[RMDB]
RNA sequence: GGGAACGACUCGAGUAGAGUCGAAAAUGUAGCUUGUGUCUUCGUUCUGAAUAGUAUUAAGAUAGGUUCUAGACAUAAGUAUACUGUUUUAGUACAUUGUGAGAACUAAACCACGUAACAAUAAUUGCCGGUGGGAGUAGUUCGCUACUCCCACCGGAAAAGAAACAACAACAACAAC
Reactivity to 2A3 in 0.01 (KOAc 150mM, MgCl2 10mM, bicine 150mM(pH8.5), 24C), signal-to-noise 1, nucleotides 027 to 126: u090g030u080a000g000c000u050u010g000u000g000u000c000u070u110c090g100u000u000c000u160g080a060a170u050a120g300u140a110u300u250a110a030g000a050u080a130g040g050u000u000c000u000a020g000a000c020a050u100a090a070g000u000a170u000a050c000u000g000u160u030u030u030a000g000u080a020c000a050u060u060g060u000g300a300g000a030a000c000u110a140a210a000c000c000a020c000g140u080a170a000c090a020a020u120a090a140u050u130g120
Record summary:
Conditions: 150 mM KOAc, 10 mM MgCl2 and 150 mM bicine (pH 8.5), 24 C. The record gives the reactivity of an RNA of 177 nucleotides to 2A3. For 2A3 the reverse transcriptase was SuperScript II with manganese. The data come from the RNA Mapping Database (RMDB), library OK1LIB. For 2A3, 352 sequencing reads were counted.